This 177-nucleotide RNA was probed chemically with DMS and 2A3.
RNA sequence: GGGAACGACUCGAGUAGAGUCGAAAAGCCCGGCGAUCAGUAAGUGCACCAGAUUGGGAUUAACCUUCAAAAGCUGCAGCUUAACUAUUCCCAGUAAUGUCCACUUACAAGGAGCCCCUGGAUGGCUCUACUGCUCAUGCUUCGGCAUGAGCAGUAGAAAAGAAACAACAACAACAAC
Reactivity to DMS in 0.01 (KOAc 150mM, MgCl2 10mM, bicine 150mM(pH8.5), 24C), signal-to-noise 1, nucleotides 027 to 126: g060c010c000c000g050g010c000g000a040u010c100a070g000u000a020a000g000u000g030c200a050c010c190a110g100a080u000u020g020g000g000a030u000u000a110a050c170c160u060u000c160a040a060a010a030g030c050u000g020c210a220g020c110u000u000a070a090c160u010a020u000u000c000c000c000a000g000u020a270a070u030g000u000c150c040a000c000u000u000a010c040a060a040g080g000a010g040c030c020c020c130u020g000g020a120u030g000g010c080u000
Reactivity to 2A3 in 0.01 (KOAc 150mM, MgCl2 10mM, bicine 150mM(pH8.5), 24C), signal-to-noise 2, nucleotides 027 to 126: g090c000c000c000g010g060c000g050a050u130c020a000g000u000a010a000g030u000g000c000a010c000c010a010g050a240u020u030g020g000g020a000u040u090a040a110c050c040u190u100c170a100a110a020a030g010c030u120g120c100a050g000c020u060u060a040a060c040u040a090u020u050c000c000c010a000g000u070a000a130u060g000u000c050c000a000c000u000u020a000c010a000a030g050g000a030g000c000c040c000c040u050g160g010a090u110g110g000c010u000
Reactivities are given for positions 27 through 126. For 2A3 the reverse transcriptase was SuperScript II with manganese. For DMS, 1,012 sequencing reads were counted. The 2A3 profile rests on 913 reads.